[RMDB]
RNA sequence: GGGAACGACUCGAGUAGAGUCGAAAAUGCGGAAGGUAAUGUCAUUACACCGGAUAUGUAUAAACGCGUGAUGGACUUAGGCGUUCAUUGUUCAGUCGUUGGUGGUGCGAUAACACGACCAAAAGAAGGUGGCGCUAUGAUUCGUCAUAGCGCCACCAAAAGAAACAACAACAACAAC
Reactivity to 2A3 in 0.01 (KOAc 150mM, MgCl2 10mM, bicine 150mM(pH8.5), 24C), signal-to-noise 1, nucleotides 027 to 126: u090g000c060g030g040a220a000g010g000u000a010a000u090g300u050c030a000u000u000a000c000a000c000c000g000g000a010u120a000u000g010u150a040u000a250a150a060c010g000c000g000u030g000a010u040g050g050a000c000u030u270a030g090g000c050g000u030u030c000a000u030u030g140u050u080c040a200g020u000c260g000u000u000g050g040u060g010g000u040g000c000g000a000u000a110a000c080a000c050g160a160c000c080a040a040a040a020g030a000a070